[RMDB]
RNA sequence: GGGAACGACUCGAGUAGAGUCGAAAAGCUCUUAAUCAAUUGAUAGAAAGUAAAAGUGGAAGAAUAAAAAUUGCCACCUAAGAAGAUAGAAUAAUUUAUUUACCUACCUUCAAACGAGGGAAUUGACUAGCAAGUUGUUAUUCGUAACAACUUGCUAAAAAGAAACAACAACAACAAC
Reactivity to 2A3 in 0.01 (KOAc 150mM, MgCl2 10mM, bicine 150mM(pH8.5), 24C), signal-to-noise 2, nucleotides 027 to 126: g000c030u060c020u070u230a110a110u100c070a070a100u040u080g090a030u070a140g120a060a150a000g020u120a150a060a040a000g010u030g060g090a040a060g090a190a250u200a240a070a000a020a000u070u150g000c000c000a000c000c010u050a020a000g010a020a000g040a030u060a050g000a040a180u090a100a110u130u050u080a050u020u140u010a010c000c000u020a040c000c000u010u020c000a170a150a140c030g000a050g040g020g000a000a020u080u090g110a100c060
Reactivity to DMS in 0.01 (KOAc 150mM, MgCl2 10mM, bicine 150mM(pH8.5), 24C), signal-to-noise 2, nucleotides 027 to 126: g000c090u000c040u060u000a080a140u000c050a160a040u040u020g000a080u010a140g040a100a130a110g010u000a050a050a050a120g020u010g010g000a070a080g020a050a070u020a050a120a060a080a300u020u000g000c000c000a030c000c020u000a110a080g000a030a000g020a080u000a000g000a090a240u020a020a010u000u010u020a070u030u000u000a030c120c000u000a000c030c010u000u000c020a080a030a070c240g000a030g030g000g000a020a020u010u010g000a110c300